[RMDB]
Chemical mapping of a 207-nucleotide RNA with 2A3 and DMS. Values cover nucleotides 27 to 156. The RNA was probed in 150 mM KOAc, 10 mM MgCl2 and 150 mM bicine (pH 8.5) at 24 C. For 2A3, 9,027 sequencing reads were counted.

RNA sequence: GGGAACGACUCGAGUAGAGUCGAAAAGGGAGAUUCGUCUCCCGGAACGGGGUCUAUAGGUGGGACAUGCGUGUCACCUGAAGCCUCCACGGGUGACCACGCAACAGCCGUAACAUCCUAUAGACGGAGGCACCCUAACAUAAUCGUUCGCGAUUAAGUUAGUUACUCAAUUCGUUGAGUAACUAACAAAAGAAACAACAACAACAAC
Reactivity to 2A3 in 0.01 (KOAc 150mM, MgCl2 10mM, bicine 150mM(pH8.5), 24C), signal-to-noise 7, nucleotides 027 to 156: g000g030g010a030g010a020u060u120c190g070u010c060u000c000c000c000g000g000a040a010c050g060g000g030g010u000c000u000a000u010a000g020g010u060g050g070g100a130c160a300u200g000c000g010u010g010u000c000a000c000c000u000g010a060a010g010c000c000u010c000c010a000c010g000g000g000u010g020a050c130c050a020c140g010c010a070a110c040a130g230c070c080g020u030a030a020c010a040u160c000c010u000a000u000a000g000a000c010g000g000a000g000g000c010a030c010c000c000u050a110a020c050a170u170a080a030u060c020g050u080u070c260g020c020g150a020u110u050a130a030
Reactivity to DMS in 0.01 (KOAc 150mM, MgCl2 10mM, bicine 150mM(pH8.5), 24C), signal-to-noise 3, nucleotides 027 to 156: g030g040g010a010g010a070u000u000c200g020u000c000u010c000c000c000g000g010a070a090c090g010g020g050g000u000c020u000a040u000a020g000g070u010g000g030g000a090c110a150u000g020c050g030u000g010u000c000a020c020c000u000g010a100a100g020c000c000u010c010c040a300c050g000g010g010u000g000a060c300c090a030c000g030c000a150a110c090a180g030c100c080g010u000a090a070c030a090u000c000c010u000a050u000a020g010a030c030g010g020a090g040g020c000a080c000c010c010u010a080a130c110a150u000a090a050u000c040g010u010u000c140g000c020g010a060u000u000a080a220